[RMDB]
RNA sequence: GGGAACGACUCGAGUAGAGUCGAAAACUAAUGAAGUAUAAGACUUGGCUCCUUUGAGUAACUCUUGUCAUUCUUUCUAUUGAGGGAACUUUUAAAAGUCUGUCUUAUUUUCUUUCCCUUGAAAGAAAUCUAGACACUGAUUCGUCAGUGUCUAGAUAAAAGAAACAACAACAACAAC
Reactivity to DMS in 0.01 (KOAc 150mM, MgCl2 10mM, bicine 150mM(pH8.5), 24C), signal-to-noise 2, nucleotides 027 to 126: c100u000a070a100u010g000a040a020g010u000a020u000a010a070g000a030c010u010u000g020g010c030u000c070c150u000u000u000g020a060g000u000a110a120c060u000c020u000u000g000u010c120a110u000u000c090u020u010u000c110u010a180u000u000g010a020g000g010g000a150a050c030u000u010u010u010a030a040a060a040g010u000c070u000g010u000c010u000u010a040u000u000u010u000c010u000u000u000c000c010c020u000u000g000a060a100a120g000a040a090
Reactivity to 2A3 in 0.01 (KOAc 150mM, MgCl2 10mM, bicine 150mM(pH8.5), 24C), signal-to-noise 2, nucleotides 027 to 126: c060u120a110a180u190g020a030a010g050u040a020u010a110a000g000a010c010u080u100g050g000c010u000c030c000u030u060u120g010a010g000u010a090a100c010u000c020u040u080g090u100c020a100u190u080c070u120u160u060c040u080a130u100u090g010a010g010g000g050a030a040c000u080u110u210u260a100a120a040a000g010u000c010u010g040u000c040u020u100a070u030u030u020u010c010u000u040u000c010c000c000u020u050g090a080a050a020g050a000a160

Description: An RNA of 177 nucleotides, treated with DMS and 2A3 and read out base by base. Source: RMDB library OK2TST, as collected in RNAgym. The RNA was probed in 150 mM KOAc, 10 mM MgCl2 and 150 mM bicine (pH 8.5) at 24 C. The 2A3 profile rests on 1,016 reads.